Chemical mapping of a 177-nucleotide RNA with 2A3 and DMS. The data come from the RNA Mapping Database (RMDB), library RFMREP. For DMS, 18,186 sequencing reads were counted.
RNA sequence: GGGAACGACUCGAGUAGAGUCGAAAAGGACGCUUCGGCGUCCGUAUACAGGAAUGAUGACCGGUUUCGGGACUGAACGAUGAUGACACCAGCUAUCGCUGACCAAUACGAUGCGUUCGCGCAUCAACCACUUUACAUUAUUCGUAAUGUAAAGUGGAAAAGAAACAACAACAACAAC
Reactivity to 2A3 in 0.01 (KOAc 150mM, MgCl2 10mM, bicine 150mM(pH8.5), 24C), signal-to-noise 9, nucleotides 027 to 126: g000g000a000c010g010c020u030u070c190g120g000c000g000u000c000c000g000u000a010u020a010c040a020g120g090a140a130u150g070a050u090g050a070c000c030g040g030u070u150u220c050g030g040g050a110c040u060g030a120a040c050g060a090u130g020a020u090g030a020c020a030c050c010a010g010c030u090a090u250c100g000c050u030g020a060c010c030a060a030u140a130c120g010a010u000g000c000g000u020u050c220g000c000g000c050a000u010c000a000a010
Reactivity to DMS in 0.01 (KOAc 150mM, MgCl2 10mM, bicine 150mM(pH8.5), 24C), signal-to-noise 9, nucleotides 027 to 126: g010g000a020c000g020c010u000u010c170g040g010c000g020u000c000c000g010u000a030u000a120c120a070g010g010a110a070u000g000a080u000g000a080c030c020g010g010u000u000u000c050g010g000g000a100c080u000g010a070a070c080g000a070u000g000a120u010g000a080c090a070c060c010a040g000c040u000a060u000c080g010c040u000g000a130c050c050a070a080u010a100c190g000a010u000g010c010g010u000u010c210g020c020g020c000a000u000c010a090a180
Description
Conditions: 150 mM KOAc, 10 mM MgCl2 and 150 mM bicine (pH 8.5), 24 C.